[RMDB]
RNA sequence: GGGAACGACUCGAGUAGAGUCGAAAACGACCUUAAACAGUUCUGGUGGUGCUCUGAAUGGACUGCUCUACUGAGAUUAUAAAAUAGAAGGUAAGCUAUUAUCUCUUACAACAGGGCAGGGCUUGUUAAAAGCCUUUCAGUUUCGACUGAAAGGCAACUAGAGUUAUACGUUCGCGUAUAACUCUAGAAAAGAAACAACAACAACAAC
Reactivity to 2A3 in 0.01 (KOAc 150mM, MgCl2 10mM, bicine 150mM(pH8.5), 24C), signal-to-noise 4, nucleotides 027 to 156: c050g080a030c020c010u090u150a100a170a050c020a090g020u090u040c030u050g020g030u020g020g010u040g020c030u030c020u050g050a070a060u080g040g050a030c000u010g010c000u000c010u030a100c060u070g000a000g010a030u020u100a080u180a100a130a050a020u050a030g050a090a030g140g040u220a070a040g040c000u000a000u070u000a020u030c010u000c000u010u100a060c040a120a020c020a080g000g000g000c000a000g020g040g020c020u030u020g010u030u080a100a140a080a030g000c000c000u000u010u000c010a010g000u000u010u220c180g060a020c010u000g010a000a000a000g000g000c010a000a000
Reactivity to DMS in 0.01 (KOAc 150mM, MgCl2 10mM, bicine 150mM(pH8.5), 24C), signal-to-noise 1, nucleotides 027 to 156: c040g010a300c040c010u000u010a080a170a090c050a040g000u010u000c040u000g010g060u000g020g030u000g020c030u000c030u020g000a140a100u010g020g000a060c000u010g010c010u000c020u000a120c060u010g000a090g020a060u010u000a180u000a090a060a030a030u000a070g010a110a110g020g020u000a030a140g020c130u000a080u000u010a060u020c010u030c020u020u010a160c030a070a080c010a020g010g030g000c000a050g030g010g020c070u010u000g020u000u040a040a090a120a200g000c010c000u020u000u000c000a020g000u000u000u010c290g000a070c000u010g010a000a010a020g020g090c020a010a020

Overview
This 207-nucleotide RNA was probed chemically with 2A3 and DMS. It was measured as part of the RMDB library M2RFPK. For DMS, 2,455 sequencing reads were counted.